[RMDB]
RNA sequence: GGGAACGACUCGAGUAGAGUCGAAAACUCGCGCGAACAUUGAGGCGUGGAGCGCGACAUGAAUCAGCCUCUAUUAGAUUAAUGGUCGACAGAUCAGCGGCGAUCAGCGACCUAAUUAGAAGCCGCAACCGGAAGAGGAGACGCUCGACGGACGUCACGCAGCCAUAUUAUUCGUAAUAUGGCUGCGAAAAGAAACAACAACAACAAC
Reactivity to 2A3 in 0.01 (KOAc 150mM, MgCl2 10mM, bicine 150mM(pH8.5), 24C), signal-to-noise 3, nucleotides 027 to 156: c000u010c010g000c000g010c010g130a290a010c000a070u060u080g010a000g000g040c020g020u030g000g030a090g040c010g000c010g020a010c060a130u280g080a040a140u190c020a010g000c000c000u010c020u050a200u060u160a020g090a080u060u120a010a060u130g040g010u000c030g020a080c110a220g000a000u000c000a020g000c000g010g010c030g010a010u000c040a000g030c010g020a000c000c000u000a000a020u040u080a030g060a150a000g000c000c000g010c000a040a060c000c010g020g040a150a040g010a080g050g050a170g000a040c060g060c060u010c020g010a000c030g000g000a010c020g070u060c060a010
Reactivity to DMS in 0.01 (KOAc 150mM, MgCl2 10mM, bicine 150mM(pH8.5), 24C), signal-to-noise 1, nucleotides 027 to 156: c030u000c000g030c000g070c010g040a210a120c100a050u000u000g040a060g000g010c010g000u010g000g000a270g020c000g000c020g010a080c080a110u000g080a150a110u010c020a080g000c000c040u020c020u000a120u010u000a060g010a110u000u000a100a130u000g000g010u000c000g050a090c000a240g000a250u010c020a110g000c040g040g020c000g000a040u000c010a120g000c140g030a010c000c000u000a020a020u010u000a130g010a060a020g010c000c010g000c000a150a110c040c030g000g010a070a100g000a150g050g000a040g000a020c000g000c030u000c010g010a140c030g020g000a050c030g020u000c040a270